[RMDB]
The record gives the reactivity of an RNA of 177 nucleotides to DMS and 2A3.
The RNA was probed in 150 mM KOAc, 10 mM MgCl2 and 150 mM bicine (pH 8.5) at 24 C.
For DMS the reverse transcriptase was MarathonRT.
It was measured as part of the RMDB library TTRDEL.
RNA sequence: GGGAACGACUCGAGUAGAGUCGAAAAGAUAUGGAGAAUUUCGAUAAGAGCGCUGUCGGAAACGACAGAGUGGCUCUUUUGACGAAACUCCUAAGUCAAAAGACGUAUUUCUUCGGAAAUACGUCAAUCAAUAUAUGACGUUCGCGUCAUAUAUUGAAAAAGAAACAACAACAACAAC
Reactivity to DMS in 0.01 (KOAc 150mM, MgCl2 10mM, bicine 150mM(pH8.5), 24C), signal-to-noise 9, nucleotides 027 to 126: g010a030u000a300u000g000g010a010g010a130a170u000u000u000c000g020a140u000a010a010g010a010g010c000g000c000u000g000u000c000g010g000a120a070a160c000g000a010c000a000g000a020g020u010g010g000c000u000c000u000u000u010u000g020a220c110g000a010a020a060c010u000c000c000u000a070a140g000u000c040a080a070a120a150g000a010c000g010u000a000u000u000u000c000u000u010c200g020g000a010a010a000u000a000c000g010u000c000a010a040
Reactivity to 2A3 in 0.01 (KOAc 150mM, MgCl2 10mM, bicine 150mM(pH8.5), 24C), signal-to-noise 5, nucleotides 027 to 126: g010a020u070a050u130g020g040a040g040a190a300u030u020u010c020g010a030u040a100a010g000a000g000c020g000c020u010g000u010c000g040g010a090a070a050c010g010a000c010a000g020a020g030u190g140g000c000u010c000u010u010u000u030g040a030c000g000a010a010a010c000u000c000c000u020a210a040g070u040c030a030a020a040a170g010a000c000g000u000a010u010u010u010c020u040u100c300g100g020a010a000a020u000a010c000g000u000c000a000a000